RNA sequence: GGGAACGACUCGAGUAGAGUCGAAAACUAUGCAGAUUCGUCUGCAUAGAGACCCGAUGAAGCGGCACUUACACAGCUUGAUACACGUAAGAAGUGCAAUAAAGGGACGAGGGUUCGCCCUCGUCAAAGGACAUUUAAUCUUCGGAUUAAAUGUCCUAAAAGAAACAACAACAACAAC
Reactivity to DMS in 0.01 (KOAc 150mM, MgCl2 10mM, bicine 150mM(pH8.5), 24C), signal-to-noise 4, nucleotides 027 to 126: c000u000a000u000g000c000a010g010a010u010u020c220g030u000c000u000g000c000a000u010a000g000a110g010a160c000c000c000g020a110u010g010a090a080g000c150g010g020c010a050c020u010u000a070c110a050c110a130g000c070u010u000g010a150u020a130c190a090c130g000u000a090a120g010a050a070g000u010g020c010a110a100u010a030a070a120g010g020g010a010c000g010a010g010g000g000u000u010c180g010c000c000c000u000c010g010u000c010a000a050
Reactivity to 2A3 in 0.01 (KOAc 150mM, MgCl2 10mM, bicine 150mM(pH8.5), 24C), signal-to-noise 4, nucleotides 027 to 126: c000u020a000u010g000c000a010g020a040u030u070c090g140u010c090u000g000c000a000u000a000g020a010g030a030c000c020c050g020a200u200g080a090a030g080c060g080g010c070a000c000u020u080a050c070a010c010a060g010c020u020u050g030a010u120a210c090a020c130g020u030a030a050g070a100a000g090u040g020c030a020a060u200a150a110a030g140g050g000a010c000g000a000g030g000g040u020u080c150g110c020c010c010u010c000g010u000c000a000a000